[RMDB]
RNA sequence: GGGAACGACUCGAGUAGAGUCGAAAACGACUGGUGGACGACGAUGGCGGUGAGGUCCCGCACGACGGGGAAACCGUUGGAAAGCUUCAGGUUCGCGGUCCGACCCUGUUCGACGGCUACCUGAAUCGUAUCAUUGGCAAUUCGUUGCCAAUGAUACAAAAGAAACAACAACAACAAC
Reactivity to 2A3 in 0.01 (KOAc 150mM, MgCl2 10mM, bicine 150mM(pH8.5), 24C), signal-to-noise 4, nucleotides 027 to 126: c030g100a070c040u090g030g010u040g000g020a020c030g000a000c020g060a070u070g050g020c050g000g000u020g010a060g030g030u100c040c020c000g000c020a110c080g170a040c000g000g000g000g000a070a090a070c010c000g000u000u030g040g060a200a070a010g030c030u110u110c050a040g060g030u050u070c040g000c030g060g020u020c040c030g010a030c030c010c060u070g060u070u050c040g010a020c010g040g000c020u010a020c000c010u020g040a030a070u110c060
Reactivity to DMS in 0.01 (KOAc 150mM, MgCl2 10mM, bicine 150mM(pH8.5), 24C), signal-to-noise 4, nucleotides 027 to 126: c060g000a140c050u010g010g020u010g010g010a100c050g000a080c070g000a100u000g010g010c040g000g000u000g020a170g030g010u000c090c010c000g020c060a180c080g010a070c030g000g000g000g040a110a180a090c010c000g020u010u000g010g020a100a090a150g000c170u010u010c070a040g000g000u000u000c150g000c030g000g010u000c030c050g000a080c040c140c120u010g030u000u000c040g000a040c030g010g010c030u000a020c010c000u000g010a030a070u000c100